[RMDB]
RNA sequence: GGGAACGACUCGAGUAGAGUCGAAAAGAGGGAGAUGAAGAGUGCCGAGGUCCUGCAGCUGCAGGACUGCGACCUGUCCGGCAGUCUGCCCUCGUCGUGGUCUGCGAUGCCGAAGCUGCGGGAAGUCGCACGCAGUACUAUUCGUAGUACUGCGUGCAAAAGAAACAACAACAACAAC
Reactivity to DMS in 0.01 (KOAc 150mM, MgCl2 10mM, bicine 150mM(pH8.5), 24C), signal-to-noise 3, nucleotides 027 to 126: g000a020g010g020g000a160g010a120u030g040a120a060g000a070g010u010g000c020c010g010a140g010g010u000c010c020u020g010c010a100g030c070u050g000c020a040g010g020a010c000u000g000c000g010a020c030c020u000g000u030c070c030g020g000c010a060g000u000c060u000g010c000c000c000u000c110g020u000c020g040u000g000g000u000c010u010g010c000g000a140u030g010c090c100g000a120a030g010c010u000g010c010g000g000g000a060a100g000u020c120
Reactivity to 2A3 in 0.01 (KOAc 150mM, MgCl2 10mM, bicine 150mM(pH8.5), 24C), signal-to-noise 6, nucleotides 027 to 126: g030a010g020g060g020a120g020a090u170g120a100a090g080a050g100u070g050c040c010g040a110g020g080u030c000c010u020g000c000a030g010c020u120g000c020a010g030g140a020c000u000g000c010g000a030c000c030u050g100u160c050c000g020g000c010a030g100u100c120u140g080c010c000c000u000c010g000u000c000g000u010g010g030u000c010u030g020c040g100a140u170g080c070c020g050a070a020g000c010u010g010c020g000g000g010a000a030g060u080c060